Conditions: 150 mM KOAc, 10 mM MgCl2 and 150 mM bicine (pH 8.5), 24 C.
Chemical mapping of a 177-nucleotide RNA with DMS and 2A3.
High DMS reactivity at an A or C suggests that its Watson-Crick edge is free.
2A3 adducts were read by reverse transcription with SuperScript II with manganese.
DMS adducts were read by reverse transcription with MarathonRT.
For DMS, 1,744 sequencing reads were counted.
Values cover nucleotides 27 to 126.
[RMDB]
RNA sequence: GGGAACGACUCGAGUAGAGUCGAAAACAAGAGGCCAAAAAAUGUUUGGAGGAAGAAAAACAAAGGCAGGAAGUGGCGGCGGCCUGACGGUGCGUGUGUGUCUGCAGAGAAGGGAGGGAGCCGGCUCUAGGCUAAUUGUCUUCGGACAAUUAGCCUAAAAAGAAACAACAACAACAAC
Reactivity to DMS in 0.01 (KOAc 150mM, MgCl2 10mM, bicine 150mM(pH8.5), 24C), signal-to-noise 2, nucleotides 027 to 126: c060a100a120g000a140g000g010c070c020a020a040a040a070a080a070u000g000u010u000u000g000g000a110g000g010a120a080g020a050a040a140a050a030c090a040a070a050g020g000c000a030g020g000a040a070g090u000g000g000c060g010g040c080g000g020c070c040u000g020a090c160g000g050u000g070c080g000u020g050u070g000u020g010u060c030u030g000c090a040g000a120g050a090a110g000g000g000a180g000g000g000a110g010c010c040g000g000c040u000c060
Reactivity to 2A3 in 0.01 (KOAc 150mM, MgCl2 10mM, bicine 150mM(pH8.5), 24C), signal-to-noise 2, nucleotides 027 to 126: c010a000a080g050a160g050g000c030c120a010a060a000a000a010a090u110g120u020u020u080g090g000a040g120g020a040a020g020a010a140a040a010a000c100a080a070a010g040g000c030a040g010g040a110a040g010u020g080g000c010g000g020c000g030g000c000c020u020g020a000c050g020g030u050g040c080g000u080g030u010g000u000g080u100c010u050g030c090a000g000a000g020a110a030g080g040g000a060g000g020g010a000g000c000c010g010g030c040u030c000